[RMDB]
RNA sequence: GGGAACGACUCGAGUAGAGUCGAAAAGUCCCUAAAUCUAUGCUAAGUUGAUCAAACGUGGUUUGAUUGCUUUGACAGCUAGGAUGUUAGCUUGGAAGCAGCUAUUCAUUUAAAGAGUGCGUAACAGGUAAAUGUCAUCCUUCGGGAUGACAUUUACAAAAGAAACAACAACAACAAC
Reactivity to DMS in 0.01 (KOAc 150mM, MgCl2 10mM, bicine 150mM(pH8.5), 24C), signal-to-noise 3, nucleotides 027 to 126: g010u000c010c010c000u040a030a130a040u010c030u010a070u040g020c010u000a010a020g000u020u030g070a000u010c000a000a000a020c000g020u070g030g000u000u000u000g000a030u000u000g000c010u010u030u020g010a120c250a050g010c010u010a090g000g000a050u000g000u010u010a030g000c020u020u020g000g030a170a080g000c090a020g010c040u020a040u020u030c120a010u020u020u030a080a070a060g010a040g020u000g010c080g000u010a040a140c100a060g000
Reactivity to 2A3 in 0.01 (KOAc 150mM, MgCl2 10mM, bicine 150mM(pH8.5), 24C), signal-to-noise 3, nucleotides 027 to 126: g100u030c000c060c000u000a060a020a000u000c030u030a060u110g010c000u000a010a070g020u150u240g230a020u000c000a050a000a020c190g300u150g050g090u160u010u000g050a010u000u060g050c040u070u030u170g090a070c060a010g010c000u030a030g020g000a000u040g010u070u110a030g000c020u020u090g130g050a100a000g030c010a000g000c000u000a020u110u040c050a030u010u040u180a110a100a020g110a010g070u130g040c100g110u060a060a000c030a050g000
The record gives the reactivity of an RNA of 177 nucleotides to DMS and 2A3. For 2A3 the reverse transcriptase was SuperScript II with manganese. The reactions ran in a buffer of 150 mM KOAc, 10 mM MgCl2 and 150 mM bicine (pH 8.5), at 24 C.